Structure probing data (2A3) for a 207-nucleotide construct.
RNA sequence: GGGAACGACUCGAGUAGAGUCGAAAACCUCCCCUUCGGGGGAGGAAAAAAGAUAUGGAGACGCCGUGAGGCAACAGCAUAUCUCUCUCGGAAACGAGAGAGAGUAUGACAUGCCUCGGGGUCUCCUAAGUCAAAAAGUGGAAGUUCGCUUCCACAACCAUAUGAUGGUCUUCGGACCAUCAUAUGGAAAAGAAACAACAACAACAAC
Reactivity to 2A3 in 0.01 (KOAc 150mM, MgCl2 10mM, bicine 150mM(pH8.5), 24C), signal-to-noise 1, nucleotides 027 to 156: c000c000u010c000c000c010c000u070u110c220g000g010g000g000g000a040g000g000a080a020a000a000a000a000g050a010u110a020u070g040g010a060g000a020c140g160c300c100g160u180g070a020g010g040c030a080a070c090a120g130c000a000u000a030u000c000u000c000u020c000u000c000g010g060a110a090a050c040g000a000g000a000g000a000g000a000g000u050a000u020g050a070c060a070u130g000c000c000u020c000g000g000g010g020u000c000u020c000c000u000a000a000g000u000c020a000a000a000a110a120g000u020g010g000a000a000g000u040u160c210g040c140u000u000c020c000a000c010a000a010
For 2A3, 1,126 sequencing reads were counted.